Structure probing data (DMS and 2A3) for a 207-nucleotide construct. The 2A3 profile rests on 2,265 reads. It was measured as part of the RMDB library OK3TST. The DMS profile rests on 4,783 reads. Conditions: 150 mM KOAc, 10 mM MgCl2 and 150 mM bicine (pH 8.5), 24 C. 2A3 adducts were read by reverse transcription with SuperScript II with manganese.
[RMDB]
RNA sequence: GGGAACGACUCGAGUAGAGUCGAAAAAAGACUGAGACUUUCAGCAAGAUAUUUGAAUGAUCAAAUUCAGUUUUAGUGACCAAAAUCUUUCUGGUUUCUAGUGAUAUUAAUAAAAUCAAUGAUGCCAUAGCUGACCAAAUGGCCCUUUUCAUUCAGCCAUAUGCGUAUCAUUCGUGAUACGCAUAUGAAAAGAAACAACAACAACAAC
Reactivity to DMS in 0.01 (KOAc 150mM, MgCl2 10mM, bicine 150mM(pH8.5), 24C), signal-to-noise 3, nucleotides 027 to 156: a120a100g020a070c010u000g020a080g020a120c080u000u010u010c010a070g020c040a090a140g020a180u000a070u000u020u010g000a060a080u020g010a100u010c050a040a050a100u000u000c050a050g010u000u000u000u000a090g010u000g030a100c040c010a030a020a130a110u010c030u000u000u000c090u000g010g010u000u000u000c020u000a110g010u010g010a060u000a110u000u000a050a120u010a060a080a070a120u000c020a080a090u000g010a080u000g010c020c020a070u000a080g000c030u000g020a060c090c040a020a060a130u000g030g010c020c020c010u000u000u000u030c040a130u000u000c060a070g000c090
Reactivity to 2A3 in 0.01 (KOAc 150mM, MgCl2 10mM, bicine 150mM(pH8.5), 24C), signal-to-noise 4, nucleotides 027 to 156: a000a010g030a000c020u020g020a020g040a070c010u060u100u040c060a010g040c040a090a070g050a160u130a130u100u180u080g020a050a030u080g060a070u090c080a070a110a150u150u030c020a010g060u010u040u060u120a040g020u050g030a030c010c000a020a060a100a130u050c040u040u160u050c030u030g020g000u010u060u030c030u060a040g040u020g050a030u040a040u240u170a140a130u130a130a140a020a020u080c040a020a110u080g030a030u090g020c020c000a030u040a030g020c030u030g030a060c040c030a020a130a110u070g020g000c000c010c030u090u100u050u060c040a050u120u010c010a000g030c020